[RMDB]
RNA sequence: GGGAACGACUCGAGUAGAGUCGAAAAUAGCUGCAACCUUAUUUGAGUAUCCUGAAAACGGGCUUUUCAGAAUGGUGUUGCCGUAUAAAAUUGUAGGAGUGCAUAGUGGCCCGUAUAGCAGGCAUUAGAGAGCUACAGAUGUUCGCAUCUGUAGCAACUAGAUAUUUCUGUUCGCAGAAAUAUCUAGAAAAGAAACAACAACAACAAC
Reactivity to DMS in 0.01 (KOAc 150mM, MgCl2 10mM, bicine 150mM(pH8.5), 24C), signal-to-noise 3, nucleotides 027 to 156: u020a090g020c020u000g000c030a040a100c020c000u000u000a100u000u000u000g000a180g010u000a050u010c000c010u000g000a030a010a060a060c060g040g030g050c100u000u000u000u000c050a080g000a070a070u000g010g020u000g010u010u000g010c020c040g000u010a080u010a080a060a080a120u000u000g020u000a070g030g010a120g030u000g010c040a130u000a110g030u000g030g020c010c020c000g030u000a060u000a100g020c040a050g030g010c050a050u000u000a140g010a190g000a160g020c000u000a010c000a010g010a010u000g020u000u000c300g040c040a010u000c000u000g020u000a000g020c000a010a030
Reactivity to 2A3 in 0.01 (KOAc 150mM, MgCl2 10mM, bicine 150mM(pH8.5), 24C), signal-to-noise 3, nucleotides 027 to 156: u060a010g020c030u030g000c010a050a040c020c000u110u180a140u150u190u030g030a060g060u070a100u110c000c000u000g050a020a010a030a050c040g010g010g000c020u100u080u090u110c060a070g050a170a050u080g030g000u060g030u080u050g030c020c020g020u050a030u080a160a100a060a050u170u140g050u060a050g010g060a030g030u060g030c020a020u060a090g080u070g020g020c040c000c000g000u000a000u000a020g020c010a010g030g000c000a000u010u090a040g050a020g010a020g110c000u000a000c000a000g000a010u020g060u050u090c180g020c090a000u010c000u000g000u000a000g000c000a000a000